This 207-nucleotide RNA was probed chemically with 2A3 and DMS. The DMS profile rests on 2,739 reads. The reactions ran in a buffer of 150 mM KOAc, 10 mM MgCl2 and 150 mM bicine (pH 8.5), at 24 C. DMS adducts were read by reverse transcription with MarathonRT. Reactivities are given for positions 27 through 156. For 2A3 the reverse transcriptase was SuperScript II with manganese.
RNA sequence: GGGAACGACUCGAGUAGAGUCGAAAAGCUUAAUAACCUGCGCUGACCCCUUCUCCCCCAGCUUGCCUGUGUCCUAGGGAAUUGGAAGGUCAUCCUUCACAGGAUCGUGUGGAAGUCCUGCUCGGGGUCCAAACAUGGUAAUUCGUUACCAUGUUAAGGACUGGGUUAAAUUCGUUUAACCCAGUCCAAAAGAAACAACAACAACAAC
Reactivity to 2A3 in 0.01 (KOAc 150mM, MgCl2 10mM, bicine 150mM(pH8.5), 24C), signal-to-noise 2, nucleotides 027 to 156: g050c070u180u240a170a030u140a130a270c020c070u130g040c080g020c040u030g010a050c000c020c010c030u150u150c050u030c060c010c010c000c020a000g000c030u020u090g030c020c000u020g010u010g010u100c000c050u050a030g050g030g040a100a080u120u070g020g020a080a000g030g010u080c020a070u200c010c000u060u040c010a050c000a050g030g020a030u070c050g090u130g040u060g070g050a020a000g020u050c020c010u000g000c010u030c050g030g000g000g010u000c030c010a010a020a020c000a010u000g000g000u010a030a000u030u000c020g030u010u000a000c000c000a010u000g020u050u030a050a040
Reactivity to DMS in 0.01 (KOAc 150mM, MgCl2 10mM, bicine 150mM(pH8.5), 24C), signal-to-noise 1, nucleotides 027 to 156: g040c080u000u010a030a090u000a130a060c020c040u000g010c040g020c040u000g010a080c020c010c010c020u010u010c080u000c050c000c020c040c060a120g000c030u000u000g030c040c030u000g000u010g040u020c060c040u000a150g000g000g000a080a130u000u010g010g000a080a090g000g040u000c090a180u000c030c010u010u020c060a060c030a060g000g000a030u000c070g040u000g040u010g000g040a160a130g010u000c020c030u000g000c040u000c120g020g000g020g010u000c020c010a010a020a060c000a000u000g000g010u010a010a080u000u000c230g040u000u000a020c000c000a010u000g000u000u000a030a120